[RMDB]
Chemical mapping of a 177-nucleotide RNA with DMS and 2A3. For 2A3 the reverse transcriptase was SuperScript II with manganese. DMS adducts were read by reverse transcription with MarathonRT. Reactivities are given for positions 27 through 126. For DMS, 7,027 sequencing reads were counted.

RNA sequence: GGGAACGACUCGAGUAGAGUCGAAAAGAGGGCCAGUUGAAGCAGGCAUGUCUUCAUUCCUGAUUUCCUGAUGGCAUGAAACACAUGGCCUGUUCCUAUUGGCACCUUAAAGGGGCGUUCGCGCCCCGUCUACAAGUACCUUCGGGUACUUGUAGACAAAAGAAACAACAACAACAAC
Reactivity to DMS in 0.01 (KOAc 150mM, MgCl2 10mM, bicine 150mM(pH8.5), 24C), signal-to-noise 5, nucleotides 027 to 126: g010a020g010g010g000c010c010a010g000u010u000g010a040a020g020c000a020g010g020c010a020u000g000u000c110u000u000c000a030u010u000c000c010u000g010a290u000u010u010c190c220u010g010a200u000g000g000c070a020u000g000a010a030a070c290a030c010a010u000g010g020c000c000u000g010u010u000c020c010u010a010u000u000g000g000c000a090c000c010u000u000a040a060a130g000g000g020g020c000g030u000u010c240g020c020g010c000c000c000c000
Reactivity to 2A3 in 0.01 (KOAc 150mM, MgCl2 10mM, bicine 150mM(pH8.5), 24C), signal-to-noise 6, nucleotides 027 to 126: g050a010g000g010g000c000c010a010g000u010u010g040a030a010g000c010a000g000g000c010a000u010g000u000c010u010u000c010a000u010u000c010c010u030g040a070u150u240u210c090c100u090g030a030u050g000g000c010a000u000g000a010a020a000c050a000c000a030u030g230g170c000c000u000g000u000u000c000c000u010a020u010u010g020g000c050a300c060c010u020u020a090a120a030g000g010g000g010c000g020u060u070c170g010c000g000c100c000c010c010